The record gives the reactivity of an RNA of 207 nucleotides to DMS and 2A3. For DMS, 1,866 sequencing reads were counted. For 2A3, 1,288 sequencing reads were counted. 2A3 adducts were read by reverse transcription with SuperScript II with manganese. The RNA was probed in 150 mM KOAc, 10 mM MgCl2 and 150 mM bicine (pH 8.5) at 24 C. It was measured as part of the RMDB library M2RFPK.

[RMDB]
RNA sequence: GGGAACGACUCGAGUAGAGUCGAAAAGCGCAAAUCCACAAACGCCAACGAUGACCGUUUCGCUGUAGCCGCUUAAGGCAACAGCCGGGGCCGCCUGAGCCCUGUUACCAAAGACGGCUGGCGGGGGUAAUUACUUAUUGCUUCGGCAAUAAGUAAAUCAAACUCUCUGAUUCGUCAGAGAGUUUGAAAAAGAAACAACAACAACAAC
Reactivity to DMS in 0.01 (KOAc 150mM, MgCl2 10mM, bicine 150mM(pH8.5), 24C), signal-to-noise 1, nucleotides 027 to 156: g010c020g010c000a000a070a080u000c040c040a030c030a050a300a040c010g000c020c050a100a240c130g000a050u000g020a100c000c030g000u010u010u030c020g050c000u030g040u000a030g010c000c010g010c280u010u000a090a200g030g010c000a040a010c020a010g000c020c010g060g010g000g040c000c020g020c140c110u010g010a180g020c000c000c010u000g020u000u000a090c120c080a050a210a160g020a080c050g000g030c040u000g000g030c050g010g020g010g070g000u010a040a030u000u000a010c000u000u020a010u010u000g020c000u000u010c300g050g000c010a000a000u000a000a000g000u000a010a010a160
Reactivity to 2A3 in 0.01 (KOAc 150mM, MgCl2 10mM, bicine 150mM(pH8.5), 24C), signal-to-noise 1, nucleotides 027 to 156: g090c070g000c080a040a070a060u050c040c010a100c070a120a130a030c060g010c010c010a070a040c080g170a130u120g070a140c000c020g010u000u040u090c040g010c010u010g000u020a040g010c010c000g110c280u260u210a080a100g010g000c000a000a000c000a010g000c000c020g000g000g000g000c000c020g080c030c080u150g000a040g010c010c010c000u020g040u070u070a060c040c000a000a070a020g000a010c010g010g010c040u010g000g000c000g000g030g000g010g000u020a060a020u050u000a010c000u000u000a000u000u010g010c000u010u060c190g070g000c000a000a010u000a000a010g000u010a010a000a000